This 177-nucleotide RNA was probed chemically with 2A3 and DMS. 2A3 adducts were read by reverse transcription with SuperScript II with manganese. For DMS the reverse transcriptase was MarathonRT.

RNA sequence: GGGAACGACUCGAGUAGAGUCGAAAAUUAACUAGCGUAGGGAACCAAGCAAAGAGGUAAGAAAUCCCACGGAAGAAGGCUUGGUUCGCGCCGGAGGAAGAAGAAGUCCCACUCCCUACGCCACAAAUAUGUGCUCAUUAUUCGUAAUGAGCACAUAAAAAGAAACAACAACAACAAC
Reactivity to 2A3 in 0.01 (KOAc 150mM, MgCl2 10mM, bicine 150mM(pH8.5), 24C), signal-to-noise 2, nucleotides 027 to 126: u040u030a040a050c030u010a020g000c000g030u000a030g000g030g000a030a000c020c000a010a000g000c000a000a040a100g130a080g040g070u110a130a090g070a160a120a030u070c010c000c010a010c040g050g070a050a060g030a060a030g050g000c020u030u050g020g010u020u010c010g020c050g000c000c010g030g010a040g050g020a050a030g050a050a030g020a040a000g060u000c000c010c010a010c010u020c020c000c000u010a000c000g000c000c030a050c010a020a060a010
Reactivity to DMS in 0.01 (KOAc 150mM, MgCl2 10mM, bicine 150mM(pH8.5), 24C), signal-to-noise 2, nucleotides 027 to 126: u010u010a040a070c130u000a090g000c000g030u000a030g010g000g000a030a060c020c010a000a030g000c030a050a090a130g000a090g020g020u010a040a100g000a120a130a130u010c010c020c030a120c130g020g000a060a060g010a090a080g010g010c010u000u000g000g000u000u000c020g010c130g010c070c040g000g000a060g000g000a070a070g010a070a110g020a060a100g000u000c010c010c010a170c080u000c010c000c010u000a000c040g010c000c140a020c200a050a060a100
Source information: The reactions ran in a buffer of 150 mM KOAc, 10 mM MgCl2 and 150 mM bicine (pH 8.5), at 24 C. For DMS, 2,024 sequencing reads were counted.